[RMDB]
RNA sequence: GGGAACGACUCGAGUAGAGUCGAAAAAAAAUGGCUGUGAGGAACAACUGUCUUCACGCAGAAAGCGUCUAGCCAUGGCGUUAGUAUGAGUGUCGUGCAGCCUCCAGCCUCGAAAAACCGUCAGAAACAUGUAGUUACUCUUCGGAGUAACUACAUGAAAAGAAACAACAACAACAAC
Reactivity to DMS in 0.01 (KOAc 150mM, MgCl2 10mM, bicine 150mM(pH8.5), 24C), signal-to-noise 5, nucleotides 027 to 126: a060a040a080a070u000g010g000c000u000g010u020g020a020g000g000a080a020c020a150a300c000u010g010u000c000u000u000c000a010c000g000c000a010g010a120a150a300g000c010g000u000c000u010a070g030c220c300a100u010g000g000c010g000u010u010a040g000u000a040u000g000a030g000u000g010u000c020g000u000g010c000a010g000c020c000u000c000c010a010g000c000c000u000c120g010a020a050a040a060a100c020c040g000u010c130a140g000a170a110a100
Reactivity to 2A3 in 0.01 (KOAc 150mM, MgCl2 10mM, bicine 150mM(pH8.5), 24C), signal-to-noise 4, nucleotides 027 to 126: a000a000a000a020u080g000g000c040u070g110u250g160a010g000g010a060a070c080a050a030c130u010g000u020c000u000u000c000a010c030g030c000a010g010a010a000a000g010c010g000u000c020u050a050g040c050c020a050u130g000g000c000g010u010u000a010g000u000a010u000g020a020g020u010g010u020c030g050u190g080c000a000g010c000c000u000c000c000a000g020c000c000u000c010g000a050a010a000a010a020c060c040g100u120c060a030g190a070a140a030